[RMDB]
RNA sequence: GGGAACGACUCGAGUAGAGUCGAAAAAGGAGCCGAUGAAGGACGUAGGAGGCUGCGAUAAGCCUCGGGGAGCUGUCAACCGAGCUGAGAUCCGAGGAUGUCCGAAUGGGGAAACCCAGCCACAGUGAAUGAGUGCUUGAUUCGUCAAGCACUCAUUAAAAGAAACAACAACAACAAC
Reactivity to DMS in 0.01 (KOAc 150mM, MgCl2 10mM, bicine 150mM(pH8.5), 24C), signal-to-noise 4, nucleotides 027 to 126: a050g000g000a110g020c030c030g010a080u030g000a120a130g000g010a030c010g000u020a040g010g010a110g010g000c020u000g010c050g000a080u010a050a140g000c010c000u010c000g030g000g030g000a020g010c000u010g010u000c050a050a300c070c060g000a010g020c000u000g010a140g010a030u010c000c000g000a040g000g000a020u020g010u010c010c030g010a110a060u040g000g010g000g010a050a090a140c040c000c020a120g000c050c060a090c130a100g000u020g020
Reactivity to 2A3 in 0.01 (KOAc 150mM, MgCl2 10mM, bicine 150mM(pH8.5), 24C), signal-to-noise 3, nucleotides 027 to 126: a000g130g000a020g030c030c050g010a020u090g050a010a040g000g020a030c020g000u020a020g000g070a030g040g000c000u020g000c010g050a070u030a080a000g000c000c000u010c010g040g000g010g000a000g000c010u000g020u110c010a140a200c090c010g030a020g000c010u140g130a000g010a030u010c000c020g000a000g010g010a000u020g010u000c030c030g010a010a040u110g010g000g030g030a020a010a040c030c030c000a000g040c080c020a080c010a090g100u060g190
Structure probing data (DMS and 2A3) for a 177-nucleotide construct. 2A3 is a SHAPE reagent: it acylates the 2'-hydroxyl of flexible nucleotides of all four kinds. The reactions ran in a buffer of 150 mM KOAc, 10 mM MgCl2 and 150 mM bicine (pH 8.5), at 24 C. For 2A3 the reverse transcriptase was SuperScript II with manganese. DMS adducts were read by reverse transcription with MarathonRT. Reactivities are given for positions 27 through 126. The data come from the RNA Mapping Database (RMDB), libraries RFM100 and RFMREP.